Source: RMDB library OK3TST, as collected in RNAgym. Chemical mapping of a 207-nucleotide RNA with 2A3.

[RMDB]
RNA sequence: GGGAACGACUCGAGUAGAGUCGAAAAAUGGUAGAAAAUGAUGAUCUUGCAAUCACUUCUAUGUUUAGAUUUAGUCUUAUUUAGGUAAGUAUUUAUUCAGAUUCAAGACCCCUCAGCCAGCCGUGGUAGCAUGCACCUGUAGUCCCAGCUACGCAGGCCCAGCAAACCUAUUCGUAGGUUUGCUGGGAAAAGAAACAACAACAACAAC
Reactivity to 2A3 in 0.01 (KOAc 150mM, MgCl2 10mM, bicine 150mM(pH8.5), 24C), signal-to-noise 1, nucleotides 027 to 156: a000u080g000g060u020a030g060a030a100a010a090u030g060a080u030g000a010u020c000u030u110g080c070a080a100u100c030a030c110u090u080c040u210a080u140g020u000u170u060a040g010a030u010u070u280a040g030u060c000u020u100a100u070u100u180a070g060g000u030a030a000g000u000a130u040u170u060a080u140u090c040a040g050a080u030u020c000a000a080g060a270c030c020c020c020u020c030a000g010c050c040a010g000c010c020g080u020g050g000u000a000g000c040a020u040g030c030a000c050c040u000g030u100a040g000u040c020c000c000a000g000c000u020a020c040g010c060a010g010g030

The RNA was probed in 150 mM KOAc, 10 mM MgCl2 and 150 mM bicine (pH 8.5) at 24 C.